[RMDB]
RNA sequence: GGGAACGACUCGAGUAGAGUCGAAAAUAAAAUAGCGUAAUGGACAUUGGGAGUGUACGCUAAGUGUGUGUUGUAUACCUAAGGUGCAAUUGAACACACAGACAGUUGCACCUAAUGUCCAAAAAAACCUAUAUGAAUCCUUCGGGAUUCAUAUAGGAAAAGAAACAACAACAACAAC
Reactivity to DMS in 0.01 (KOAc 150mM, MgCl2 10mM, bicine 150mM(pH8.5), 24C), signal-to-noise 2, nucleotides 027 to 126: u000a040a080a080a110u010a060g000c060g010u010a140a170u000g010g000a010c020a010u000u000g010g000g000a090g010u000g030u010a000c080g010c010u000a070a140g010u000g010u000g020u000g010u000u000g000u000a060u010a090c060c040u000a120a090g020g030u000g020c010a020a030u010u020g010a070a040c020a040c040a040c040a080g000a100c140a050g000u000u000g000c010a040c000c000u000a000a000u000g010u000c010c000a000a000a040a090a020a040a020
Conditions: 150 mM KOAc, 10 mM MgCl2 and 150 mM bicine (pH 8.5), 24 C. An RNA of 177 nucleotides, treated with DMS and read out base by base. For DMS the reverse transcriptase was MarathonRT. For DMS, 2,415 sequencing reads were counted.